[RMDB]
RNA sequence: GGGAACGACUCGAGUAGAGUCGAAAACAGAUGAGAGUUAGGCGCAUAGUCUGGCAGGCCGGGGCGAUAGGCUUGCAGCAGACCCAUGCCGUCCGGUUUGGCACCGGCUUUCCAGGCCAUAUUAAUCUCCUAUGGCCUUAUUCGUAAGGCCAUAGGAAAAAGAAACAACAACAACAAC
Reactivity to 2A3 in 0.01 (KOAc 150mM, MgCl2 10mM, bicine 150mM(pH8.5), 24C), signal-to-noise 3, nucleotides 027 to 126: c050a040g090a090u230g020a090g020a030g100u110u070a080g020g000c030g020c110a050u050a040g030u000c010u010g020g000c020a020g000g030c000c010g030g000g030g060c060g080a070u080a060g020g040c000u050u130g080c010a020g020c010a000g010a090c000c030c010a020u110g020c030c000g060u110c010c020g070g000u040u100u130g070g000c000a020c030c010g000g000c000u020u000u000c020c000a010g010g040c000c050a020u050a140u050u090a130a100u020c030
Reactivity to DMS in 0.01 (KOAc 150mM, MgCl2 10mM, bicine 150mM(pH8.5), 24C), signal-to-noise 3, nucleotides 027 to 126: c070a060g000a080u020g000a100g020a100g020u010u010a090g000g010c050g020c050a040u010a150g010u000c010u000g000g000c020a010g000g010c010c000g000g000g020g030c050g000a070u030a050g020g010c140u000u000g000c030a090g000c040a050g010a120c010c050c070a100u010g000c000c040g000u010c060c020g010g010u010u010u000g010g000c090a080c020c000g010g000c070u000u010u000c020c030a070g000g000c000c070a070u020a050u000u030a090a120u040c090

An RNA of 177 nucleotides, treated with 2A3 and DMS and read out base by base. Values cover nucleotides 27 to 126.